[RMDB]
RNA sequence: GGGAACGACUCGAGUAGAGUCGAAAACGGCUUUCUCAGGAUUGUCAUGGUGGAUGGCUAAAUUAUAACUUAAAUCCUCAUUCCGCUCAACUCUUCGAUUGUAGACGACUAUCAAUAAACUGGGUGCGUUAAGAUUAGACUUCGGUCUAAUCUUAACAAAAGAAACAACAACAACAAC
Reactivity to DMS in 0.01 (KOAc 150mM, MgCl2 10mM, bicine 150mM(pH8.5), 24C), signal-to-noise 4, nucleotides 027 to 126: c110g010g000c070u000u010u000c020u000c060a090g000g000a080u010u010g000u000c040a060u000g020g030u000g010g020a080u000g020g010c050u010a040a060a090u020u000a060u010a100a110c090u000u000a040a080a090u000c020c020u000c060a110u000u000c020c030g020c050u000c080a070a070c050u000c040u010u000c060g000a080u000u010g010u000a070g000a100c100g010a060c050u000a060u000c060a040a070u010a060a060a150c070u010g000g010g010u000g020c120
Reactivity to 2A3 in 0.01 (KOAc 150mM, MgCl2 10mM, bicine 150mM(pH8.5), 24C), signal-to-noise 4, nucleotides 027 to 126: c020g030g020c010u030u100u050c020u000c000a060g110g040a090u060u090g040u070c060a040u090g080g000u050g020g030a030u040g020g000c050u030a040a070a040u260u180a130u060a140a020c000u020u100a060a090a080u070c010c000u030c020a050u090u040c020c010g040c030u040c060a020a070c030u030c030u140u070c050g150a160u000u120g040u050a040g010a060c030g020a030c040u090a040u100c010a050a170u090a150a100a020c020u040g050g030g000u050g020c020
Source: RMDB library RFMREP, as collected in RNAgym.
This 177-nucleotide RNA was probed chemically with DMS and 2A3.
2A3 adducts were read by reverse transcription with SuperScript II with manganese.
DMS adducts were read by reverse transcription with MarathonRT.
The DMS profile rests on 3,778 reads.
The reactions ran in a buffer of 150 mM KOAc, 10 mM MgCl2 and 150 mM bicine (pH 8.5), at 24 C.
For 2A3, 3,831 sequencing reads were counted.